[RMDB]
RNA sequence: GGGAACGACUCGAGUAGAGUCGAAAAGCGUUAACUGCUGCUUAUGCGCCUACUGCGGCGAUGCAAAACUAUCGUCAAUACGCUGAAAUGCUUCAGUCAGAUCCGGAUGCGGCGAUGGCAUUUGCGAAUGCGGCGGGUAUUAAUACCGUCAGUAAAAACCAUGCCUACGGUUCGCCGUAGGCAUGGUAAAAGAAACAACAACAACAAC
Reactivity to 2A3 in 0.01 (KOAc 150mM, MgCl2 10mM, bicine 150mM(pH8.5), 24C), signal-to-noise 2, nucleotides 027 to 156: g000c040g040u090u100a080a040c070u060g020c020u040g000c010u100u140a040u300g010c010g020c000c000u140a130c150u170g050c100g000g000c020g050a050u020g000c040a010a010a010a010c010u000a010u010c010g000u010c000a040a060u070a010c010g000c030u080g050a040a040a000u130g010c000u070u120c010a040g010u040c000a000g000a180u000c030c030g050g010a020u040g070c040g000g000c000g020a020u000g020g040c100a280u000u000u040g070c060g040a120a070u130g000c010g000g000c010g000g010g000u070a150u180u250a260a030u040a120c000c000g070u050c020a040g060u000a120a020a020a000